[RMDB]
RNA sequence: GGGAACGACUCGAGUAGAGUCGAAAAGUCACGAGGAGACUCGUGACAGCAUGCUUCGGCAUGCAAGGGUCGGCAUGGCAUCUCCACCUCCUCGCGGUCCGACCUGGGCAUCCGAAGGAGGACGCACGUCCACUCGGAUGGAAAAUGGAGAGCCAAACUAAUCCCACUCAUUCGUGAGUGGGAUUAGAAAAGAAACAACAACAACAAC
Reactivity to 2A3 in 0.01 (KOAc 150mM, MgCl2 10mM, bicine 150mM(pH8.5), 24C), signal-to-noise 2, nucleotides 027 to 156: g000u000c000a000c000g000a000g020g030a030g040a010c010u010c000g000u000g000a000c000a000g030c000a000u000g000c000u080u010c240g130g000c010a010u000g000c020a050a060g050g010g000u000c000g030g000c130a110u030g010g000c010a300u050c000u020c010c000a030c010c010u000c000c030u070c090g120c090g060g020u000c000c010g000a040c000c000u010g000g020g070c030a010u000c000c000g070a090a050g030g000a170g030g010a060c050g080c130a110c180g000u000c000c000a000c010u000c000g010g030a020u000g070g080a040a110a000a060u090g010g000a000g000a000g020c000c020a030a000a000

The record gives the reactivity of an RNA of 207 nucleotides to 2A3. Values are in units of 0.01, from 0 to 300, in steps of 10. Source: RMDB library OK3TST, as collected in RNAgym. The 2A3 profile rests on 1,217 reads. The RNA was probed in 150 mM KOAc, 10 mM MgCl2 and 150 mM bicine (pH 8.5) at 24 C.